RNA sequence: GGGAACGACUCGAGUAGAGUCGAAAAGAUCACUUCUGGUGGGUAGAACGUCCCAGCACGUUCGACUGCAGCAGCAUACUGUAGCGUUUGCGCAUAUGCUAAUUGGGCUACUCCAGAUGGAAUCCGGUCAUACUCAUCUUGGAAAACCUGUGUGAACACUAUUGAGUGACUUCGGUCACUCAAUAGUAAAAGAAACAACAACAACAAC
Reactivity to DMS in 0.01 (KOAc 150mM, MgCl2 10mM, bicine 150mM(pH8.5), 24C), signal-to-noise 2, nucleotides 027 to 156: g000a030u000c050a040c040u000u000c040u000g040g060u000g010g050g040u000a070g000a020a050c000g020u000c010c030c300a240g050c040a020c010g000u000u000c010g030a070c010u000g000c030a060g000c090a100g020c040a070u000a040c030u000g040u000a010g070c000g040u000u010u000g050c040g030c040a130u000a020u010g020c030u000a080a150u000u000g020g030g020c000u000a110c030u000c030c010a060g010a050u010g010g000a080a300u000c030c010g000g040u000c050a060u010a070c070u000c020a070u000c010u000u010g020g000a090a200a070a040c000c030u000g030u000g000u010g030a060a110c220
Reactivity to 2A3 in 0.01 (KOAc 150mM, MgCl2 10mM, bicine 150mM(pH8.5), 24C), signal-to-noise 5, nucleotides 027 to 156: g030a060u050c010a010c120u070u040c020u060g020g020u060g030g020g060u080a030g020a030a000c010g060u050c080c100c040a040g030c160a010c000g020u030u030c030g050a080c030u080g030c020a030g000c000a000g000c000a030u030a090c070u140g040u180a130g020c060g070u110u240u300g000c020g000c010a030u040a020u110g000c000u020a070a100u130u130g060g020g000c000u050a040c020u000c020c000a020g010a050u040g040g080a070a050u070c080c040g030g020u040c030a050u060a120c010u020c060a080u050c030u080u090g050g010a030a070a040a090c010c040u040g040u050g020u060g110a060a020c040